[RMDB]
RNA sequence: GGGAACGACUCGAGUAGAGUCGAAAAUCUAAAGAAGACCUACAUACAUUGUAUGUAGACCCUAAGUAUCAAGUCAUUGUCUUAAAAGACAAUGUACUUUCUUCUAUGCUUAGAUUGCACACCGUUGACGCUCACACCUUCGGGUGUGAGAAAAGAAACAACAACAACAAC
Reactivity to 2A3 in 0.01 (KOAc 150mM, MgCl2 10mM, bicine 150mM(pH8.5), 24C), signal-to-noise 5, nucleotides 027 to 129: u000c010u070a090a010a000g080a040a020g040a060c010c000u000a000c000a000u000a000c050a150u120u300g030u000a000u000g010u000a010g040a050c010c000c000u020a020a000g010u050a040u170c090a020a000g000u000c000a000u000u000g000u000c000u120u230a150a140a050a000g010a010c000a000a000u000g030u010a000c000u030u010u000c060u050u000c010u020a050u060g030c010u010u020a010g010a030u030u110g090c080a030c010a030c050c030g030u040u050g090a040c030g000
Reactivity to DMS in 0.01 (KOAc 150mM, MgCl2 10mM, bicine 150mM(pH8.5), 24C), signal-to-noise 2, nucleotides 027 to 129: u030c010u010a020a090a020g030a050a060g020a170c300c000u000a010c000a010u000a000c010a170u060u080g030u060a020u010g000u020a040g010a150c060c060c120u050a050a060g030u010a070u080c260a080a040g000u000c050a060u000u000g010u000c000u000u070a060a070a150a050g020a000c000a000a040u000g020u070a040c000u020u000u060c040u030u000c040u030a060u000g000c010u050u000a010g000a120u000u060g050c120a000c000a080c060c060g100u000u000g030a140c170g050
Chemical mapping of a 170-nucleotide RNA with 2A3 and DMS. Reactivities are given for positions 27 through 129. The DMS profile rests on 9,421 reads. 2A3 adducts were read by reverse transcription with SuperScript II with manganese. Conditions: 150 mM KOAc, 10 mM MgCl2 and 150 mM bicine (pH 8.5), 24 C. The 2A3 profile rests on 8,232 reads.